[RMDB]
RNA sequence: GGGAACGACUCGAGUAGAGUCGAAAAGAAACGACGGUUGGCUAAUCCUGGUCGGACAUCAGGAGGUUAGUGCAGUCGCAUAAGCCAACUUGACAACAAAAAGGAAAAAGAAAGAAGAAAAAGAAAAAUACUACUAGUGAUUCGUCACUAGUAGUAUAAAAGAAACAACAACAACAAC
Reactivity to DMS in 0.01 (KOAc 150mM, MgCl2 10mM, bicine 150mM(pH8.5), 24C), signal-to-noise 5, nucleotides 027 to 126: g010a110a060a020c040g000a200c200g020g010u000u010g010g010c010u000a120a110u000c000c010u000g010g000u010c190g000g030a300c150a030u000c010a000g000g000a010g000g010u020u010a120g020u000g020c000a210g010u020c190g010c010a010u000a060a040g010c000c010a010a000c000u000u000g010a150c190a040a030c050a020a030a060a040a060g000g000a020a070a080a080a070g000a050a060a070g010a060a060g020a020a060a060a070a100g010a020a090a080a080
Reactivity to 2A3 in 0.01 (KOAc 150mM, MgCl2 10mM, bicine 150mM(pH8.5), 24C), signal-to-noise 3, nucleotides 027 to 126: g020a010a030a000c030g070a010c010g010g000u000u010g000g000c010u020a030a070u000c000c000u000g000g060u060c140g080g140a040c040a050u010c000a010g000g020a020g000g070u090u120a050g000u000g010c020a050g240u220c140g000c000a030u060a070a000g000c000c000a000a000c000u020u050g030a020c060a100a000c010a020a090a010a030a040g120g040a060a100a050a010a030g110a080a060a030g080a070a010g070a020a070a030a010a010g130a010a150a010a000
The record gives the reactivity of an RNA of 177 nucleotides to DMS and 2A3.
For 2A3 the reverse transcriptase was SuperScript II with manganese.
The reactions ran in a buffer of 150 mM KOAc, 10 mM MgCl2 and 150 mM bicine (pH 8.5), at 24 C.
DMS adducts were read by reverse transcription with MarathonRT.
It was measured as part of the RMDB library OK1LIB.